[RMDB]
RNA sequence: GGGAACGACUCGAGUAGAGUCGAAAAACGGCCGACGCGGUGGCAUGUCACCUGGUAGCUGCCGGCGAGUUGAUCGACGACGACCCAGAAGCCGCUCUGCGCCACGCGCGGGCGGCGCGGGUUCGGGCAGUGAUAGGACAUUCGUGUCCUAUCACUGAAAAGAAACAACAACAACAAC
Reactivity to 2A3 in 0.01 (KOAc 150mM, MgCl2 10mM, bicine 150mM(pH8.5), 24C), signal-to-noise 2, nucleotides 027 to 126: a000c050g030g020c040c020g020a060c050g020c050g040g130u020g020g010c040a060u180g100u110c030a070c100c090u090g120g000u060a040g000c000u010g020c020c010g040g030c030g020a060g000u060u090g080a140u050c060g030a030c040g040a020c040g000a010c020c000c010a030g080a120a010g010c000c000g010c020u010c090u220g020c000g000c070c180a150c200g020c000g010c000g000g000g000c000g020g000c000g000c010g000g000g000u070u090c020g000g000g030
Reactivity to DMS in 0.01 (KOAc 150mM, MgCl2 10mM, bicine 150mM(pH8.5), 24C), signal-to-noise 4, nucleotides 027 to 126: a140c050g010g020c030c010g030a050c040g000c020g020g020u000g010g020c090a080u010g020u000c050a080c070c050u010g020g020u000a120g020c050u000g010c010c020g020g010c020g000a050g000u000u000g010a110u000c030g010a120c040g010a130c060g000a060c010c010c000a150g010a130a160g000c010c000g020c010u000c010u010g050c010g030c020c190a110c200g010c010g050c010g000g010g010c000g010g010c000g010c050g000g000g010u000u000c030g000g000g020

Chemical mapping of a 177-nucleotide RNA with 2A3 and DMS. For DMS, 6,223 sequencing reads were counted. For 2A3, 2,544 sequencing reads were counted. The reactions ran in a buffer of 150 mM KOAc, 10 mM MgCl2 and 150 mM bicine (pH 8.5), at 24 C. Values cover nucleotides 27 to 126. 2A3 adducts were read by reverse transcription with SuperScript II with manganese.